[RMDB]
RNA sequence: GGGAACGACUCGAGUAGAGUCGAAAACAGUUCUCCAUCGAGUUCUGAGACUACCAUGACGGGAUUGAUGCAAUGAUAGGGGUAGAUUGCGAUGGUAAGUUGCAACCACUCAUCGACGGACAGAUGACAACGACUUCGGAUUCGUCCGAAGUCGUUGAAAAGAAACAACAACAACAAC
Reactivity to 2A3 in 0.01 (KOAc 150mM, MgCl2 10mM, bicine 150mM(pH8.5), 24C), signal-to-noise 3, nucleotides 027 to 126: c020a010g040u020u000c050u000c060c000a090u040c040g040a020g080u050u040c030u000g080a030g070a080c030u030a040c000c000a080u110g070a040c040g030g020g000a030u100u040g110a070u150g040c060a070a070u140g080a050u080a090g040g000g000g020u040a040g040a120u030u080g000c000g030a010u050g010g110u130a150a090g040u040u000g040c040a080a040c000c040a070c010u040c000a040u050c040g070a080c020g010g020a020c000a020g040a020u010g020a030
Reactivity to DMS in 0.01 (KOAc 150mM, MgCl2 10mM, bicine 150mM(pH8.5), 24C), signal-to-noise 2, nucleotides 027 to 126: c110a150g050u030u000c000u000c040c050a110u020c070g030a080g010u020u000c010u000g010a190g020a240c040u000a070c020c020a000u000g030a130c180g040g000g000a040u010u030g010a060u000g000c150a070a110u000g000a020u000a070g040g000g020g000u000a040g020a090u000u030g010c060g000a020u030g000g020u020a080a190g040u000u000g000c130a070a050c060c050a160c040u000c000a030u010c000g010a080c150g000g000a050c140a110g020a080u000g000a170